[RMDB]
Notes
The record gives the reactivity of an RNA of 177 nucleotides to 2A3 and DMS.
RNA sequence: GGGAACGACUCGAGUAGAGUCGAAAAUACGCGAGGUUCGCCUCGCGUAAAAGAGGAGCGAAAACGUGAGCGUACGUAGUGCUGUACAUCGUUCCUACACGAAUGCACAUGGUUUCGACCAUGUGAACCAUAGAUGAUUAUUCGUAAUCAUCUAUGGAAAAGAAACAACAACAACAAC
Reactivity to 2A3 in 0.01 (KOAc 150mM, MgCl2 10mM, bicine 150mM(pH8.5), 24C), signal-to-noise 9, nucleotides 027 to 126: u050a000c000g000c010g000a010g020g020u060u090c170g070c050c000u000c000g000c000g000u000a000a000a000a000g120a010g010g000a010g000c020g020a030a020a020a120c100g040u070g040a030g040c040g040u090a040c090g100u150a070g100u090g130c030u040g040u090a010c010a030u010c010g000u000u000c000c000u030a020c060a000c030g180a130a050u230g020c010a000c000a010u000g000g020u030u080u110c200g060a020c000c000a000u000g000u000g000a000a010
Reactivity to DMS in 0.01 (KOAc 150mM, MgCl2 10mM, bicine 150mM(pH8.5), 24C), signal-to-noise 9, nucleotides 027 to 126: u000a010c000g020c000g010a010g000g020u000u010c240g020c010c000u000c000g010c000g010u000a000a020a080a100g010a050g010g010a030g000c010g000a040a040a070a110c160g010u000g000a070g010c090g010u010a080c180g010u000a110g010u010g010c010u000g010u010a040c060a110u000c000g010u000u000c000c000u000a070c160a080c180g010a090a090u010g000c000a010c000a000u000g000g000u000u000u010c190g010a030c000c000a010u000g010u000g010a040a120
DMS adducts were read by reverse transcription with MarathonRT. It was measured as part of the RMDB library M2PK50.